[RMDB]
RNA sequence: GGGAACGACUCGAGUAGAGUCGAAAAACGCGUAUCGAUGGAUUGGGUUCAGUUCUGGUCUCACACGGUUUGUUCUAACAAUUUGUACUGACUGUGUUUUGAUCGAUACGGGUCGCUCUCACCUAGGGCCACGAACGGAUUUCGAUCCGUUCGUGGCAAAAGAAACAACAACAACAAC
Reactivity to 2A3 in 0.01 (KOAc 150mM, MgCl2 10mM, bicine 150mM(pH8.5), 24C), signal-to-noise 3, nucleotides 027 to 126: a000c060g000c040g050u000a000u020c000g030a020u030g030g010a060u040u030g000g040g040u190u070c000a110g130u160u160c090u040g050g000u000c010u000c010a060c000a000c000g000g000u000u000u030g040u050u000c040u020a090a080c160a130a280u100u140u300g040u040a030c010u000g000a000c000u000g000u000g050u040u020u120u260g030a010u030c010g000a000u000a010c000g020g030g000u000c030g000c010u000c010u000c020a010c010c030u070a030g030g070
Record summary: This 177-nucleotide RNA was probed chemically with 2A3.